The record gives the reactivity of an RNA of 177 nucleotides to DMS and 2A3.
Values cover nucleotides 27 to 126.
[RMDB]
RNA sequence: GGGAACGACUCGAGUAGAGUCGAAAAUGUUGACAUCAUCAAUGCACGAGCUUCUAACUGUGCUUCAAGUGUCAAUGGAACGUGUACCGCCAUUUGGUCACCGUCGAAGUCGGCGUUGAACGCAGCACGUGGGAGGCGUAUUCGUACGCCUCCCACGAAAAGAAACAACAACAACAAC
Reactivity to DMS in 0.01 (KOAc 150mM, MgCl2 10mM, bicine 150mM(pH8.5), 24C), signal-to-noise 2, nucleotides 027 to 126: u020g010u000u000g000a060c010a060u010c180a050u000c100a020a100u000g010c000a040c040g010a090g020c090u000u010c210u010a100a130c070u000g010u000g000c070u000u000c030a080a080g000u000g050u000c040a080a080u000g000g030a070a060c070g010u000g020u010a040c050c050g030c100c070a080u000u010u000g020g000u000c020a010c010c080g030u000c100g000a080a080g030u010c030g000g000c000g000u000u000g000a040a110c070g010c070a020g000c070a080
Reactivity to 2A3 in 0.01 (KOAc 150mM, MgCl2 10mM, bicine 150mM(pH8.5), 24C), signal-to-noise 1, nucleotides 027 to 126: u170g000u020u040g030a070c030a080u090c010a020u010c000a060a070u070g000c060a040c110g090a030g070c010u070u020c000u090a060a090c020u010g000u000g010c000u050u020c060a060a010g000u000g060u020c000a020a050u060g060g000a110a060c080g100u090g050u100a070c000c030g000c040c000a140u020u010u120g020g000u060c010a000c020c040g000u010c020g020a070a010g170u140c040g000g000c040g020u030u020g020a030a010c030g050c080a020g070c020a000
About this RNA: For DMS, 1,258 sequencing reads were counted. Source: RMDB library OK2TST, as collected in RNAgym. The reactions ran in a buffer of 150 mM KOAc, 10 mM MgCl2 and 150 mM bicine (pH 8.5), at 24 C.